[RMDB]
RNA sequence: GGGAACGACUCGAGUAGAGUCGAAAAGGUAAUACCUCAUGAUCUCUCCGGAGCAAAGCCUCGGCGCCUCGGGAUCGGCGAUCUUCCUAUCAGGUCGUUGGCGGGGUAAUGGCCCACCAAGCCGAAGAGACUUCUGCUACUUCGGUAGCAGAAGUCUAAAAGAAACAACAACAACAAC
Reactivity to 2A3 in 0.01 (KOAc 150mM, MgCl2 10mM, bicine 150mM(pH8.5), 24C), signal-to-noise 1, nucleotides 027 to 126: g050g000u080a090a000u110a240c000c000u070c010a140u120g080a140u000c000u000c000u000c070c000g030g020a020g010c080a230a000a000g030c000c010u010c010g030g000c030g010c050c060u040c000g030g000g020a070u000c000g010g000c000g120a130u030c040u030u050c010c000u050a170u300c090a050g020g000u030c050g070u090u030g030g030c010g030g030g020g000u100a070a040u070g000g030c010c010c000a000c000c000a030a000g000c000c000g000a090a050g030
An RNA of 177 nucleotides, treated with 2A3 and read out base by base. The 2A3 profile rests on 495 reads. For 2A3 the reverse transcriptase was SuperScript II with manganese. Reactivities are given for positions 27 through 126.